[RMDB]
RNA sequence: GGGAACGACUCGAGUAGAGUCGAAAAUUCACGUUGCUCUGGUGUCAGUGCAGGAUUGUCCGGCGUCAUCCCGCUGACUUCUUCUUUGUACUGGCGUAUCCAUUUACGCAAUUGGCUGGGAUCCAGCGCUUGCUCAGCAAUUCGUUGCUGAGCAAGCAAAAGAAACAACAACAACAAC
Reactivity to DMS in 0.01 (KOAc 150mM, MgCl2 10mM, bicine 150mM(pH8.5), 24C), signal-to-noise 2, nucleotides 027 to 126: u000u000c040a090c110g010u010u010g000c020u010c180u000g000g000u020g020u000c010a010g020u000g010c030a030g000g010a030u010u000g010u000c040c070g020g000c060g000u000c140a090u000c150c240c000g000c070u000g000a050c040u000u010c130u000u000c030u000u010u010g020u000a030c070u000g020g000c000g020u000a050u000c090c110a070u020u000u010a060c140g010c020a020a030u000u010g020g020c000u000g000g000g020a090u000c000c000a040g010c090
Reactivity to 2A3 in 0.01 (KOAc 150mM, MgCl2 10mM, bicine 150mM(pH8.5), 24C), signal-to-noise 1, nucleotides 027 to 126: u040u000c020a040c040g000u000u010g090c050u080c050u090g010g040u030g000u070c000a000g000u000g000c030a030g010g000a030u050u060g050u040c100c050g000g010c000g060u100c030a220u210c000c040c010g000c040u060g020a020c000u010u030c000u020u000c000u210u270u050g010u040a000c030u040g010g000c010g020u070a010u030c000c040a040u120u130u050a080c090g020c050a010a010u090u040g050g000c030u000g010g000g050a020u040c010c020a000g000c000